[RMDB]
RNA sequence: GGGAACGACUCGAGUAGAGUCGAAAAGCAACCGGCUUAAUGGCCGCCGGAACGCAGGGAGGUCUCAAAAGCGAGGUCGGCCUAAAGGGGAUUGCCCGCAAAGUAUUUAUCUUUUUUAUCGUGGCCGUUGCGCAUCAAAUAGACCUAAUUCUCGGCAGUACAAUUAACCGUUCGCGGUUAAUUGUACAAAAGAAACAACAACAACAAC
Reactivity to 2A3 in 0.01 (KOAc 150mM, MgCl2 10mM, bicine 150mM(pH8.5), 24C), signal-to-noise 2, nucleotides 027 to 156: g030c010a010a050c010c020g000g000c020u050u200a130a060u240g110g020c040c020g070c010c000g010g000a130a010c040g000c010a020g000g000g080a050g000g000u000c030u010c060a050a090a010a010g010c010g010a030g010g190u060c000g000g000c000c050u140a100a050a030g040g000g050g120a300u060u300g080c000c010c010g020c060a070a070a010g060u030a080u170u250u080a050u120c020u000u090u100u010u010u110a120u190c100g050u060g030g000c000c000g000u030u040g020c000g000c000a040u060c040a070a040a100u160a030g000a000c000c000u050a050a100u080u020c020u000c020g000g050c040a090

An RNA of 207 nucleotides, treated with 2A3 and read out base by base. For 2A3 the reverse transcriptase was SuperScript II with manganese. For 2A3, 588 sequencing reads were counted.